[RMDB]
RNA sequence: GGGAACGACUCGAGUAGAGUCGAAAAGAUAUGGAGGGUUCGGUAGCGUUGCGUUUGACGUCGGAAACGACCGAGCAACGAACUACUACGAACCCUCCUAAGUCAAAGGGAUCGUUCGCGAUCCCAAGUUAUCACGAGUGUUCGCACUCGUGAUAACAAAAGAAACAACAACAACAAC
Reactivity to DMS in 0.01 (KOAc 150mM, MgCl2 10mM, bicine 150mM(pH8.5), 24C), signal-to-noise 3, nucleotides 027 to 126: g000a050u010a300u010g000g000a010g010g010g010u000u000c000g020g020u000a010g040c030g010u000u010g020c000g000u010u000u020g000a180c300g000u000c010g000g000a130a070a160c010g000a000c000c000g030a090g010c000a010a000c020g000a060a090c010u000a110c010u000a110c050g020a000a000c000c000c000u000c000c000u000a000a070g000u000c030a050a160a110g000g000g000a020u000c010g010u000u030c220g020c010g010a000u000c000c000c000a010a040
Reactivity to 2A3 in 0.01 (KOAc 150mM, MgCl2 10mM, bicine 150mM(pH8.5), 24C), signal-to-noise 2, nucleotides 027 to 126: g020a020u080a010u150g000g000a000g000g000g010u010u010c030g040g010u020a000g000c000g010u000u010g010c000g060u020u220u300g130a070c030g010u010c020g010g050a080a070a070c010g000a010c010c020g020a040g020c000a010a000c010g010a040a010c000u040a020c010u030a010c000g000a000a000c010c010c000u020c000c000u010a000a000g000u010c010a000a060a130g000g000g000a010u010c010g010u090u190c270g000c020g220a000u000c020c020c000a000a000